[RMDB]
The data come from the RNA Mapping Database (RMDB), library OK2TRN.
Chemical mapping of a 177-nucleotide RNA with 2A3 and DMS.
The RNA was probed in 150 mM KOAc, 10 mM MgCl2 and 150 mM bicine (pH 8.5) at 24 C.
For DMS the reverse transcriptase was MarathonRT.

RNA sequence: GGGAACGACUCGAGUAGAGUCGAAAAGAGGAUUCAACGAGCUUCGUAGCAACGAUAGCAACGUAGCUUUUGCUACGACCCCAGCUAUCGAGGGAAGCUACGUCCCUUGCUCGAGGGGAGAAUCCGACGAGCUAUUAGUGUUCGCACUAAUAGCUCGAAAAGAAACAACAACAACAAC
Reactivity to 2A3 in 0.01 (KOAc 150mM, MgCl2 10mM, bicine 150mM(pH8.5), 24C), signal-to-noise 3, nucleotides 027 to 126: g140a010g020g010a010u010u000c040a080a040c050g010a000g030c030u080u040c020g110u070a020g000c030a070a090c010g010a000u010a000g000c010a040a070c020g000u000a010g010c040u110u170u230u300g000c000u030a010c020g160a180c040c020c010c010a000g000c000u010a000u030c000g000a060g020g130g030a070a020g000c030u050a100c000g070u060c010c010c000u000u050g050c020u020c060g020a050g000g010g000g010a100g000a010a010u000c010c000g010a040
Reactivity to DMS in 0.01 (KOAc 150mM, MgCl2 10mM, bicine 150mM(pH8.5), 24C), signal-to-noise 3, nucleotides 027 to 126: g020a190g000g020a000u000u000c010a190a120c070g020a100g010c000u010u010c030g000u010a080g000c060a120a190c040g010a010u010a010g000c010a100a120c020g010u000a000g010c000u000u000u010u000g010c010u000a010c010g000a180c110c050c060c110a130g000c000u000a010u000c000g000a070g000g000g000a040a050g000c050u000a010c020g020u010c030c030c020u000u000g020c050u000c040g000a080g010g000g000g010a170g020a030a020u000c000c000g000a250